[RMDB]
Structure probing data (2A3 and DMS) for a 207-nucleotide construct.
The RNA was probed in 150 mM KOAc, 10 mM MgCl2 and 150 mM bicine (pH 8.5) at 24 C.

RNA sequence: GGGAACGACUCGAGUAGAGUCGAAAAUUCACGAACUCUCAAUCAGCAUCCAAAGUCCUACAUGCGCAGACCACGGCCACGGCAAAUAUCAACUCGACACAUUCAGCUACGAAAACAACACAGUCAACCUUACCCACAGAGAGCAACUACCAGACCGCGUAAUUGUAGAAUUCGUUCUACAAUUACGAAAAGAAACAACAACAACAAC
Reactivity to 2A3 in 0.01 (KOAc 150mM, MgCl2 10mM, bicine 150mM(pH8.5), 24C), signal-to-noise 9, nucleotides 027 to 156: u090u050c030a020c090g050a100a040c020u010c000u020c090a060a090u040c020a050g020c020a030u030c030c030a110a080a020g050u050c020c020u060a060c020a070u100g030c050g010c040a020g030a060c030c010a040c060g060g000c030c010a030c030g030g000c040a050a080a040u120a040u060c020a030a070c030u030c060g080a030c010a010c010a110u100u090c020a030g020c030u070a070c070g090a030a040a030a060c050a050a000c030a010c010a050g030u050c020a020a070c010c010u060u080a050c010c000c010a030c030a030g080a000g000a000g030c010a030a040c010u040a040c010c030a020g030a040c030c030g030
Reactivity to DMS in 0.01 (KOAc 150mM, MgCl2 10mM, bicine 150mM(pH8.5), 24C), signal-to-noise 3, nucleotides 027 to 156: u000u010c030a120c060g000a100a070c060u000c030u000c040a090a130u000c040a110g010c040a060u000c040c030a070a150a130g030u000c010c010u000a050c070a060u000g020c020g010c070a130g000a100c020c020a060c050g000g020c040c010a080c070g010g000c050a050a060a090u000a110u000c040a010a080c060u000c020g000a090c070a070c060a100u010u010c010a080g010c010u000a140c050g000a070a030a060a070c000a040a040c030a050c050a040g020u000c030a050a070c030c020u000u000a110c010c000c020a110c070a120g000a100g000a050g020c010a040a050c040u000a050c010c020a050g000a090c030c060g020